[RMDB]
This 177-nucleotide RNA was probed chemically with DMS and 2A3. Reactivities are given for positions 27 through 126. Source: RMDB libraries RFM100 and RFMREP, as collected in RNAgym. DMS adducts were read by reverse transcription with MarathonRT.
RNA sequence: GGGAACGACUCGAGUAGAGUCGAAAAUAAGACAGUAGGGGAGCAGUGCUCAUAAUAUUCCUACCGAGGCACAAAACGUCAUUAUAAAAUAACGUAUUGUACUUUCGUGUCUAGGUUUAGGUGCGAUGUCAUCCAUCCAUUUCGAUGGAUGGAUGACAAAAGAAACAACAACAACAAC
Reactivity to DMS in 0.01 (KOAc 150mM, MgCl2 10mM, bicine 150mM(pH8.5), 24C), signal-to-noise 1, nucleotides 027 to 126: u050a110a030g010a030c050a100g050u000a070g000g000g000g020a020g020c060a080g020u020g030c040u000c020a050u010a110a020u030a100u000u010c000c000u020a010c010c040g000a010g020g000c020a000c010a010a000a050a000c020g000u000c030a020u000u000a160u060a070a110a030a060u000a060a120c060g010u000a050u000u000g010u000a050c000u000u000u000c070g000u000g000u000c040u000a060g010g030u000u000u000a140g010g040u000g000c040g050a080u010
Reactivity to 2A3 in 0.01 (KOAc 150mM, MgCl2 10mM, bicine 150mM(pH8.5), 24C), signal-to-noise 3, nucleotides 027 to 126: u140a010a010g080a000c010a020g080u130a050g040g070g010g000a000g010c080a080g180u030g130c000u000c050a040u060a150a020u110a120u140u270c000c000u030a000c000c000g040a010g000g000c000a000c000a000a020a180a000c040g020u010c010a020u000u130a040u070a110a120a170a060u180a080a020c120g030u010a060u100u080g050u090a040c020u030u020u090c040g040u010g000u010c010u030a030g030g000u110u100u080a040g030g000u070g020c050g080a080u070